[RMDB]
RNA sequence: GGGAACGACUCGAGUAGAGUCGAAAACUAGCAUGGGGUCUGGGAAAGGGGUCCUGAAAAUUCGUUCACGUGGAGUAGAGCAUCUGCCUCACAGCUCCCACUGAUGGCAGCGUCACUGUAACCUCGAUGCCACCUCUAUGGAUUUGCCAUUGCUAGGGCAACUUUUUAGUUUCGACUAAAAAGUUGCAAAAGAAACAACAACAACAAC
Reactivity to 2A3 in 0.01 (KOAc 150mM, MgCl2 10mM, bicine 150mM(pH8.5), 24C), signal-to-noise 3, nucleotides 027 to 156: c010u000a000g020c010a040u030g000g000g060g030u030c060u080g040g010g090a080a130a050g060g000g000g010u030c000c000u030g040a040a020a020a050u120u080c050g030u060u080c080a040c200g020u050g010g000a020g020u040a020g010a020g070c040a110u050c040u090g030c040c000u020c000a050c000a040g000c020u070c020c000c010a010c040u050g030a070u080g010g000c030a000g010c040g090u070c060a050c070u060g070u120a080a100c000c020u020c030g050a040u040g030c020c010a010c010c010u000c010u030a140u060g050g000a050u010u040u140g070c000c010a040u060u060g000c010u000a010g000g010